An RNA of 207 nucleotides, treated with DMS and 2A3 and read out base by base.

[RMDB]
RNA sequence: GGGAACGACUCGAGUAGAGUCGAAAAGGUUUGUCUUCGGACAAACCAAAAAACCUUUGUGUGCUUUUGACGCUUGAGGGAAGAGGCCCAUUGGGCUACCCACCUUCUGUAGAGCGAUAAGCACACUCUGGUAAAAACGCAUGCUUCGGCAUGCGAACGGGUAGAAUAUCUUCGGAUAUUCUACCCGAAAAGAAACAACAACAACAAC
Reactivity to DMS in 0.01 (KOAc 150mM, MgCl2 10mM, bicine 150mM(pH8.5), 24C), signal-to-noise 1, nucleotides 027 to 156: g030g040u000u000u000g010u010c000u010u000c300g050g000a030c000a000a010a010c070c010a000a040a090a080a090a000c000c000u000u000u000g060u000g000u000g000c000u000u000u020u000g030a220c040g000c010u000u000g000a220g000g010g010a060a010g010a300g030g010c030c020c020a300u000u000g010g080g010c000u020a010c010c000c040a300c110c000u000u010c030u000g000u000a300g010a010g000c000g020a090u000a020a030g000c030a040c000a000c010u010c010u000g050g000u000a050a000a090a120a070c000g020c000a000u000g010c000u000u000c300g010g020c010a000u000g000c020g000a010a030
Reactivity to 2A3 in 0.01 (KOAc 150mM, MgCl2 10mM, bicine 150mM(pH8.5), 24C), signal-to-noise 2, nucleotides 027 to 156: g000g010u000u010u010g010u000c010u070u130c300g010g000a020c040a000a020a030c020c000a070a020a000a040a000a000c000c000u010u020u000g030u000g000u030g000c010u100u050u070u170g170a150c060g040c000u020u010g000a110g050g070g000a020a010g010a030g010g000c050c000c010a300u180u300g030g000g000c030u050a050c050c040c020a050c000c000u010u020c130u300g020u020a030g010a000g000c000g040a050u000a020a020g000c000a000c000a000c000u000c000u000g000g010u110a060a130a080a000a030c010g000c000a020u000g010c000u030u070c180g120g000c030a000u030g010c000g000a020a030
DMS adducts were read by reverse transcription with MarathonRT.
For 2A3 the reverse transcriptase was SuperScript II with manganese.
The 2A3 profile rests on 1,325 reads.